[RMDB]
RNA sequence: GGGAACGACUCGAGUAGAGUCGAAAAUGAACGAUGCAGCUCUGAAAGCCACCUGGCAGGCGGAAGUGGACGCCAUGCGCGCGCACAUCCUGACCAUGCGCCAGGCGCUGGUCGACGCGCUGCAGCAGCUACGUCACCUAUUCGUAGGUGACGUAGCAAAAGAAACAACAACAACAAC
Reactivity to DMS in 0.01 (KOAc 150mM, MgCl2 10mM, bicine 150mM(pH8.5), 24C), signal-to-noise 3, nucleotides 027 to 126: u010g000a080a060c180g010a080u000g000c050a000g010c020u000c040u030g040a050a080a100g000c000c000a130c040c020u020g040g000c010a150g000g020c050g030g000a080a020g050u000g000g010a100c030g000c010c040a240u000g020c080g030c030g010c250g010c030a040c020a060u010c020c010u050g000a150c000c000a100u000g020c200g020c000c010a000g000g000c300g000c030u000g000g050u000c040g020a300c300g000c130g040c000u020g010c010a010g000c070a080
Reactivity to 2A3 in 0.01 (KOAc 150mM, MgCl2 10mM, bicine 150mM(pH8.5), 24C), signal-to-noise 5, nucleotides 027 to 126: u200g020a060a030c080g010a010u030g000c000a010g000c000u000c010u080g040a140a030a030g010c020c000a020c010c010u000g010g000c020a020g020g000c000g000g020a030a030g030u020g050g160a050c020g010c010c020a150u300g080c110g000c010g000c000g010c110a000c010a060u010c000c020u170g110a300c040c010a090u250g090c050g000c050c020a000g030g000c010g020c050u120g000g010u050c010g020a030c020g000c000g000c010u020g000c000a010g030c010a010